[RMDB]
Structure probing data (2A3) for a 207-nucleotide construct. Values cover nucleotides 27 to 156.
RNA sequence: GGGAACGACUCGAGUAGAGUCGAAAAGGGGUCUCCUAAGACAGGCUAAGACAUGCGGAGUAUCUGAAGCCUCCACGGAUACUCGCAACAGCUUAGCUCGAGGAGACGGAGGCACCCAAAACAAGCCUGACUAAUGUUCGCAUUAGUCAGGCUUGAACUACGACAAUAGCUUCGGCUAUUGUCGUAGAAAAGAAACAACAACAACAAC
Reactivity to 2A3 in 0.01 (KOAc 150mM, MgCl2 10mM, bicine 150mM(pH8.5), 24C), signal-to-noise 1, nucleotides 027 to 156: g060g000g050g000u000c000u030c000c010u060a100a000g000a020c040a010g000g010c000u030a030a010g020a110c060a140u090g020c040g130g170a110g030u000a000u000c000u020g030a080a010g000c010c030u010c060c000a080c090g000g000a000u010a000c010u020c010g010c030a100a190c120a090g010c010u010u000a010g000c010u040c030g000a030g000g010a000g000a000c020g020g000a000g000g010c000a070c010c020c000a000a140a000a030c020a010a000g000c000c000u020g000a010c000u000a010a010u020g060u070u040c210g010c250a000u000u000a000g000u010c000a000g000g000c000u000u010g000a000a000
The RNA was probed in 150 mM KOAc, 10 mM MgCl2 and 150 mM bicine (pH 8.5) at 24 C. 2A3 is a SHAPE reagent: it acylates the 2'-hydroxyl of flexible nucleotides of all four kinds. For 2A3 the reverse transcriptase was SuperScript II with manganese.